The data come from the RNA Mapping Database (RMDB), library TTRDEL.
Structure probing data (DMS and 2A3) for a 177-nucleotide construct.
Reactivities are rounded to 0.1 and cut off at 0 and 3.
The 2A3 profile rests on 15,806 reads.
RNA sequence: GGGAACGACUCGAGUAGAGUCGAAAAGAUAUGGACUCGAACAGGGAGCUCCUCGGAAACGAGUGAGCGAGGAUCUGUCCGAGUCCUAAGUCAAACGCUAAUUCGACGUUCGCGUCGAAUUAGCGAACAUUAGUGCGUAGUUCGCUACGCACUAAUGAAAAGAAACAACAACAACAAC
Reactivity to DMS in 0.01 (KOAc 150mM, MgCl2 10mM, bicine 150mM(pH8.5), 24C), signal-to-noise 5, nucleotides 027 to 126: g000a030u000a300u000g030g010a000c000u000c000g000a020a010c000a020g000g000g000a040g010c010u000c000c010u000c000g010g000a130a110a140c000g020a010g010u010g010a010g020c000g000a020g000g010a020u000c000u000g000u000c010c000g000a020g000u000c000c000u000a010a050g000u000c030a100a120a270c020g010c000u000a010a010u000u000c000g000a040c000g020u000u020c220g020c030g010u000c000g010a010a000u000u000a000g020c010g000a030a080
Reactivity to 2A3 in 0.01 (KOAc 150mM, MgCl2 10mM, bicine 150mM(pH8.5), 24C), signal-to-noise 3, nucleotides 027 to 126: g040a000u060a040u170g000g000a000c000u010c010g000a020a010c000a010g010g000g040a010g000c000u020c000c000u000c000g040g020a090a080a050c010g000a010g050u300g050a000g000c000g000a060g000g000a020u010c010u010g010u010c010c000g010a000g000u000c000c000u000a020a000g020u000c030a100a040a060c020g000c010u000a020a000u000u020c000g000a000c020g030u030u150c300g010c000g120u000c000g000a000a010u010u010a000g000c010g010a010a000